Structure probing data (DMS) for a 177-nucleotide construct. Conditions: 150 mM KOAc, 10 mM MgCl2 and 150 mM bicine (pH 8.5), 24 C.
RNA sequence: GGGAACGACUCGAGUAGAGUCGAAAAUCGAUGGCGUUCGCGCCAUCGAAGAGCCGUACCGCGUAGCACGCGGAUUGGAGUGAAGAUAUCCAAGGCCAUGGAGGAGGCGUGCUUUCGAGCACGCCAAAUCCGUGCAGCCUUUCGAGGCUGCACGGAUAAAAGAAACAACAACAACAAC
Reactivity to DMS in 0.01 (KOAc 150mM, MgCl2 10mM, bicine 150mM(pH8.5), 24C), signal-to-noise 1, nucleotides 027 to 126: u000c000g020a010u000g010g020c000g060u010u010c270g000c080g000c000c000a010u000c000g000a000a010g030a010g000c010c050g020u000a130c010c000g010c000g000u010a160g000c050a300c030g000c040g010g000a250u010u000g000g000a060g020u000g000a170a020g000a110u010a050u000c010c020a050a090g000g000c040c060a030u010g010g000a040g000g030a300g000g000c000g120u010g000c000u000u000u010c070g010a010g000c000a010c000g050c000c000a000a090